[RMDB]
RNA sequence: GGGAACGACUCGAGUAGAGUCGAAAAUCCUUGGCAAUGUUCGUCAGCCGAGGGUUAGCCGAUCCUAAGGUCACCCCUAACAGGAAGUGAUCGAAAGGGAAGCUGGUUAAUAUUCCAGCGCCUCAGGUAAUGAGUUGCCUUUCGAGGCAACUCAUUAAAAAGAAACAACAACAACAAC
Reactivity to DMS in 0.01 (KOAc 150mM, MgCl2 10mM, bicine 150mM(pH8.5), 24C), signal-to-noise 3, nucleotides 027 to 126: u020c000c000u000u030g000g010c010a060a040u030g010u040u010c080g020u000c100a180g010c020c020g000a010g000g000g000u000u000a080g020c010c020g000a160u030c000c000u030a130a220g030g010u010c000a020c010c060c000c030u030a170a150c300a150g010g000a080a190g010u000g000a000u000c020g000a060a160a130g000g000g000a050a180g000c020u000g010g030u000u000a090a150u020a080u080u040c000c010a000g000c000g000c040c000u000c060a020g000g040
Reactivity to 2A3 in 0.01 (KOAc 150mM, MgCl2 10mM, bicine 150mM(pH8.5), 24C), signal-to-noise 3, nucleotides 027 to 126: u000c000c010u000u000g000g000c080a130a220u050g030u170u120c120g060u250c130a160g260c030c010g020a000g000g000g000u000u030a010g060c000c020g020a130u070c000c010u040a010a120g000g000u000c000a000c000c020c000c000u000a050a040c020a070g000g070a080a150g000u000g020a030u010c010g010a080a070a010g040g010g000a100a090g000c000u000g000g000u090u050a180a050u100a110u150u020c000c000a000g020c020g080c000c010u030c050a050g010g010